Overview:
This 177-nucleotide RNA was probed chemically with DMS and 2A3. 2A3 adducts were read by reverse transcription with SuperScript II with manganese. The RNA was probed in 150 mM KOAc, 10 mM MgCl2 and 150 mM bicine (pH 8.5) at 24 C.
RNA sequence: GGGAACGACUCGAGUAGAGUCGAAAAAUAAACCGGAAGCGACGCAGCAAGCCCGACCGGAAGGGCAACCGGAAUGCGAAUCUCAACUCGCCCGAGACGCACCUGAGAGACGGGAAUGCGUAAAAAAGAUCGUAACAGGAUUCGUCCUGUUACGAUCAAAAGAAACAACAACAACAAC
Reactivity to DMS in 0.01 (KOAc 150mM, MgCl2 10mM, bicine 150mM(pH8.5), 24C), signal-to-noise 1, nucleotides 027 to 126: a090u000a000a090a090c060c000g000g020a090a110g000c160g040a080c030g020c040a040g000c100a110a110g020c070c000c000g000a150c060c030g000g010a120a100g000g000g040c020a060a130c050c020g010g000a140a140u000g020c020g000a070a090u020c050u000c140a120a120c080u000c010g000c000c000c000g000a080g010a060c130g020c010a020c010c020u000g000a300g000a110g010a030c060g000g010g010a130a090u000g040c000g010u010a000a000a010a190a060a090
Reactivity to 2A3 in 0.01 (KOAc 150mM, MgCl2 10mM, bicine 150mM(pH8.5), 24C), signal-to-noise 1, nucleotides 027 to 126: a030u170a040a090a040c050c000g020g030a130a030g100c040g110a020c040g010c030a030g000c020a050a060g050c090c000c000g050a070c020c060g090g040a050a020g000g000g010c020a000a010c010c000g050g000a030a020u130g000c010g030a070a120u050c090u020c160a020a150c020u000c000g020c000c050c000g000a040g000a020c060g010c050a290c020c010u070g010a070g010a000g000a090c020g000g010g000a020a100u080g000c040g000u070a000a000a160a000a000a000
For DMS the reverse transcriptase was MarathonRT. It was measured as part of the RMDB library M2PK90. Reactivities are given for positions 27 through 126. Values are in units of 0.01, from 0 to 300, in steps of 10.